Source: RMDB library OK1LIB, as collected in RNAgym. This 177-nucleotide RNA was probed chemically with DMS and 2A3. DMS (dimethyl sulfate) methylates the pairing face of unpaired adenines and cytosines. For 2A3 the reverse transcriptase was SuperScript II with manganese. The DMS profile rests on 8,966 reads. DMS adducts were read by reverse transcription with MarathonRT. Conditions: 150 mM KOAc, 10 mM MgCl2 and 150 mM bicine (pH 8.5), 24 C.
RNA sequence: GGGAACGACUCGAGUAGAGUCGAAAAGUAGAGGAAAGAUCUAUAUAACACAAUAUAUGUUAUUGUGUUUUCUAAUAACAAUUAUCGUGAUUGUCUAAUCUCUUCAUAUUGUUUAUUCUAGUAGAAAGUUCAUUUGUGAUUUCGAUCACAAGUGAACAAAAGAAACAACAACAACAAC
Reactivity to DMS in 0.01 (KOAc 150mM, MgCl2 10mM, bicine 150mM(pH8.5), 24C), signal-to-noise 4, nucleotides 027 to 126: g000u000a020g020a030g000g020a100a110a060g000a080u020c080u030a060u020a070u050a050a030c000a000c000a010a000u000a020u020a220u030g000u030u000a000u000u010g000u000g010u000u010u020u020c070u000a050a020u030a020a010c020a020a180u010u010a040u010c130g020u020g000a030u010u020g000u010c100u030a060a050u000c010u000c030u000u020c070a050u030a070u010u000g000u000u000u020a080u020u000c050u000a100g000u030a060g010a080a060a110
Reactivity to 2A3 in 0.01 (KOAc 150mM, MgCl2 10mM, bicine 150mM(pH8.5), 24C), signal-to-noise 4, nucleotides 027 to 126: g020u000a000g000a010g020g080a140a050a020g030a040u000c020u030a040u020a000u010a050a000c000a000c000a000a000u010a000u030a030u120g100u120u010a000u010u010g010u000g000u040u030u050u000c010u030a050a060u070a030a010c010a010a030u030u040a040u110c060g020u030g020a020u010u030g060u030c020u060a020a030u030c000u010c020u040u030c020a020u010a010u040u020g010u000u020u050a070u060u020c030u000a030g020u010a010g110a090a060a000